[RMDB]
Structure probing data (DMS and 2A3) for a 177-nucleotide construct. For DMS, 1,345 sequencing reads were counted. For DMS the reverse transcriptase was MarathonRT.
RNA sequence: GGGAACGACUCGAGUAGAGUCGAAAACAGCACCGACGGCACACCCAAUGCUGCAGGUACACCGAAGGCGGCGAGCCCACCGAUCAGCGCCGCCUCCACCGCGCCAACCCCGCCCGGGGUGGGGGCGCCAAAUGCAGGCGUUCGCGCCUGCAUUUGGAAAAGAAACAACAACAACAAC
Reactivity to DMS in 0.01 (KOAc 150mM, MgCl2 10mM, bicine 150mM(pH8.5), 24C), signal-to-noise 1, nucleotides 027 to 126: c150a060g020c020a040c080c050g000a210c000g000g000c050a190c000a120c020c000c010a010a180u000g000c070u000g000c090a040g000g040u000a020c050a120c100c020g010a210a000g010g020c000g050g000c030g010a090g020c050c020c020a040c070c060g010a040u050c110a140g020c040g020c010c020g000c000c020u000c000c010a190c140c010g000c020g000c020c060a240a040c100c010c000c010g020c180c120c160g000g000g000g050u050g020g010g000g010g010c010g000
Reactivity to 2A3 in 0.01 (KOAc 150mM, MgCl2 10mM, bicine 150mM(pH8.5), 24C), signal-to-noise 2, nucleotides 027 to 126: c010a000g060c060a020c000c030g090a060c060g010g010c010a020c010a050c020c030c010a020a030u090g010c020u020g020c050a030g040g000u030a040c050a040c060c050g070a060a020g020g000c010g000g030c010g020a030g040c000c030c010a020c000c040g070a160u140c090a040g030c000g000c020c010g020c000c000u010c000c000a080c010c020g030c000g010c010c010a040a060c000c010c000c010g050c010c070c040g050g000g000g020u050g020g000g020g030g010c020g000